The record gives the reactivity of an RNA of 170 nucleotides to DMS and 2A3. Values cover nucleotides 27 to 129. Values are in units of 0.01, from 0 to 300, in steps of 10. Conditions: 150 mM KOAc, 10 mM MgCl2 and 150 mM bicine (pH 8.5), 24 C.
[RMDB]
RNA sequence: GGGAACGACUCGAGUAGAGUCGAAAAUACGUGCUGCUCUUCUUGCCGGUUCAUUUGACAAAGUCUAUGAUAUUGGCAAUCCUAAAGGAAUUCCUAUUGUUGAUGACCCUGUGGUUGAUUGGCAUUAAUGCACAGCGCUUCGGCGCUGUGAAAAGAAACAACAACAACAAC
Reactivity to DMS in 0.01 (KOAc 150mM, MgCl2 10mM, bicine 150mM(pH8.5), 24C), signal-to-noise 3, nucleotides 027 to 129: u080a090c100g010u030g030c030u060g020c020u020c020u000u000c060u050u000g020c060c040g060g020u010u010c010a040u000u030u010g000a030c020a190a100a130g030u000c020u020a020u030g040a030u020a050u060u030g030g030c000a060a030u040c070c030u020a030a010a030g030g030a070a090u020u010c010c010u040a000u040u010g010u000u050g000a060u030g010a170c040c020c020u040g030u030g000g000u040u030g020a010u010u100g010g020c040a050u000u000a060a120u000g050
Reactivity to 2A3 in 0.01 (KOAc 150mM, MgCl2 10mM, bicine 150mM(pH8.5), 24C), signal-to-noise 4, nucleotides 027 to 129: u200a020c050g020u030g020c010u020g010c000u010c010u210u000c020u000u040g010c000c010g000g000u010u000c010a010u050u020u300g020a000c040a070a230a060g000u000c020u050a070u070g030a070u040a020u290u080g000g000c000a010a080u060c010c000u100a040a040a060g080g010a030a050u060u050c000c000u040a110u050u080g060u030u040g000a060u030g060a100c060c000c020u020g000u000g050g030u000u010g010a060u000u050g010g030c010a000u010u010a090a020u200g000